[RMDB]
RNA sequence: GGGAACGACUCGAGUAGAGUCGAAAAUCGUGAUAUGUUCGAACAAGCGAAGAGAAAUGCUCCUUGCAUUAUAUUCAUUGAUGAGAUCGAUGCUGUAGGUCGUCAUCGGGGCGCGGGUAUAGGCGGAGGAACGAAAUGGAUUCGUCCAUUUCGUUCCAAAAGAAACAACAACAACAAC
Reactivity to 2A3 in 0.01 (KOAc 150mM, MgCl2 10mM, bicine 150mM(pH8.5), 24C), signal-to-noise 2, nucleotides 027 to 126: u020c010g000u020g000a040u020a030u230g140u130u050c080g030a090a020c030a060a030g040c030g090a090a040g070a070g050a100a060a050u100g000c000u010c030c060u040u070g000c020a040u080u030a070u070a010u160u110c050a060u040u220g080a070u050g060a090g020a050u050c050g000a030u040g030c050u050g010u080a020g000g080u050c020g070u050c040a000u020c000g030g030g000g000c080g000c000g040g030g010u090a040u030a110g060g010c020g060g050a020
Reactivity to DMS in 0.01 (KOAc 150mM, MgCl2 10mM, bicine 150mM(pH8.5), 24C), signal-to-noise 2, nucleotides 027 to 126: u000c030g000u000g000a070u010a050u040g000u010u000c040g000a080a110c130a130a080g000c070g000a070a040g000a150g000a120a080a060u000g000c020u000c090c110u000u020g030c030a060u010u000a110u000a090u000u010c090a080u030u000g000a020u020g030a110g000a110u000c030g000a120u000g010c110u000g030u000a090g010g030u000c050g020u000c040a060u010c040g000g000g010g010c090g020c040g010g020g010u010a040u010a090g010g020c060g010g000a120